[RMDB]
RNA sequence: GGGAACGACUCGAGUAGAGUCGAAAAAAAAAGGACGACGACGACAGGAACAGCAGCAGCAGCUGACUAACGGACAACAGCAUACGACAGGAAGGAGGUGGAAGGUAACUAACACAACACAAAAAAACAGAUAACGGUGAUUCGUCACCGUUAUCUGAAAAGAAACAACAACAACAAC
Reactivity to DMS in 0.01 (KOAc 150mM, MgCl2 10mM, bicine 150mM(pH8.5), 24C), signal-to-noise 1, nucleotides 027 to 126: a030a060a000a140a250g000g000a100c050g000a030c070g070a090c050g010a050c070a020g050g000a060a030c070a120g040c000a070g000c040a110g000c040a040g020c000u000g000a070c050u010a060a060c110g000g000a060c070a070a050c150a050g000c070a010u050a070c130g010a100c040a030g000g010a060a030g000g010a020g000g060u000g010g000a020a010g000g000u000a000a020c100u010a030a040c070a020c070a030a030c120a040c110a020a000a040a040a030a040a110